RNA sequence: GGGAACGACUCGAGUAGAGUCGAAAAACCUGGGAUAGACUAGGGGAUCUUCUGCUCUGCACAACCAGCCACACGGCACAGUGCGCCGACAUAGGUGGCUGGUGGUGCUAGAACACAGGAUCUAAAAUCACGGUCACUGCUUCGGCAGUGACCGUGAGAGUAUCGAGUGAUUCGUCACUCGAUACUCAAAAGAAACAACAACAACAAC
Reactivity to 2A3 in 0.01 (KOAc 150mM, MgCl2 10mM, bicine 150mM(pH8.5), 24C), signal-to-noise 3, nucleotides 027 to 156: a000c050c000u060g000g050g040a250u210a270g100a100c040u040a010g000g000g010g020a000u000c000u040u020c010u060g000c010u000c000u010g020c000a000c000a020a000c000c000a000g000c010c010a000c010a020c000g010g040c050a060c050a140g270u230g210c100g020c020c000g050a150c080a170u150a080g180g000u000g000g010c000u000g020g000u000g000g000u000g000c010u020a000g000a000a000c020a000c000a010g010g010a000u000c010u040a080a080a030a110u040c000a000c000g010g000u000c000a010c000u000g000c000u050u080c200g080g000c010a000g000u000g000a000c000c000g000u000g000a000
Reactivity to DMS in 0.01 (KOAc 150mM, MgCl2 10mM, bicine 150mM(pH8.5), 24C), signal-to-noise 1, nucleotides 027 to 156: a050c000c000u020g030g010g040a140u010a080g030a140c000u000a010g070g040g000g020a020u010c010u010u000c030u010g000c010u000c000u000g020c020a050c030a050a000c000c010a030g010c000c010a020c010a240c040g010g070c010a040c050a300g040u010g020c170g010c010c010g000a100c150a190u000a120g030g020u000g030g020c010u000g000g020u000g000g030u000g020c030u010a020g000a010a010c010a020c040a050g000g020a060u000c020u000a050a090a080a230u000c010a010c010g010g040u000c000a010c010u000g000c010u000u010c300g030g000c000a020g080u010g060a000c000c000g020u000g010a000
The data come from the RNA Mapping Database (RMDB), library PKBLNG. The record gives the reactivity of an RNA of 207 nucleotides to 2A3 and DMS. 2A3 adducts were read by reverse transcription with SuperScript II with manganese.